[RMDB]
RNA sequence: GGGAACGACUCGAGUAGAGUCGAAAAAUUGGACUACAUUCAGUCAAUGUUUUCCACAAGAAGCUCCCAUUGACCGGAUCGCCAUUCCCACUGCGUGGAAAACCAAAGAAUUCGUUCAAAGUGUGGAGUAAUCCAGGUGAUUCGUCACCUGGAUUACAAAAGAAACAACAACAACAAC
Reactivity to DMS in 0.01 (KOAc 150mM, MgCl2 10mM, bicine 150mM(pH8.5), 24C), signal-to-noise 2, nucleotides 027 to 126: a110u010u010g010g000a060c020u000a120c200a110u010u000c050a090g010u010c120a060a070u000g000u000u000u000u010c000c010a020c090a090a170g020a160a190g030c040u020c020c050c020a070u000u000g000a020c000c030g030g020a050u000c070g000c110c020a070u000u000c010c020c000a160c130u000g040c130g000u010g000g000a030a030a020a030c020c160a070a090a100g000a020a040u000u010c130g040u000u000c000a020a040a110g010u000g020u000g020g000a110
Reactivity to 2A3 in 0.01 (KOAc 150mM, MgCl2 10mM, bicine 150mM(pH8.5), 24C), signal-to-noise 1, nucleotides 027 to 126: a020u040u040g030g000a010c020u090a010c150a170u060u190c100a010g060u040c020a000a050u080g020u020u000u030u000c010c020a040c000a000a050g180a100a010g000c060u020c030c000c010a040u020u050g070a040c060c010g000g030a020u050c020g020c080c000a050u050u050c000c030c010a030c100u120g050c080g060u020g050g000a020a030a000a020c090c060a130a140a060g040a100a020u040u010c020g000u000u030c020a000a030a040g080u090g110u130g100g000a090